[RMDB]
Annotation: The record gives the reactivity of an RNA of 177 nucleotides to 2A3 and DMS. The RNA was probed in 150 mM KOAc, 10 mM MgCl2 and 150 mM bicine (pH 8.5) at 24 C. Reactivities are rounded to 0.1 and cut off at 0 and 3. For DMS the reverse transcriptase was MarathonRT. The DMS profile rests on 4,001 reads.

RNA sequence: GGGAACGACUCGAGUAGAGUCGAAAAACUCGCAUUACGAUGCGAGAAUCCUGGCUCUAGCAGCACAGAAAUAUUGGCAUGGGGAAGUGAGUCUGCCAAUAUUGGCUGUGCUGCUCCAGGCAGGGAAAUCGACUUGAGAUUUCGAUCUCAAGUCGAUAAAAGAAACAACAACAACAAC
Reactivity to 2A3 in 0.01 (KOAc 150mM, MgCl2 10mM, bicine 150mM(pH8.5), 24C), signal-to-noise 7, nucleotides 027 to 126: a000c000u000c000g000c000a000u040u080a070c230g140a020u010g000c000g000a000g010a000a030u050c000c000u060g030g080c000u020c020u040a000g000c000a000g000c010a000c000a000g010a010a000a000u010a000u000u000g000g000c030a130u210g090g010g040g140a160a130g190u240g220a080g170u030c010u000g010c000c000a000a000u000a000u000u030g110g000c000u000g000u000g010c000u000g000c000u000c000c000a000g000g000c010a000g020g020g020a020a200
Reactivity to DMS in 0.01 (KOAc 150mM, MgCl2 10mM, bicine 150mM(pH8.5), 24C), signal-to-noise 2, nucleotides 027 to 126: a050c000u000c010g010c000a000u000u030a080c200g030a060u020g010c020g000a010g020a090a110u020c010c000u000g020g000c110u000c070u010a020g020c030a010g000c000a000c020a010g030a300a010a000u000a010u000u000g000g000c000a010u030g010g000g020g050a120a270g030u070g020a180g010u020c000u000g040c000c010a010a010u010a020u000u000g020g020c020u000g000u000g000c000u000g000c000u000c050c100a000g010g020c040a010g000g000g000a060a120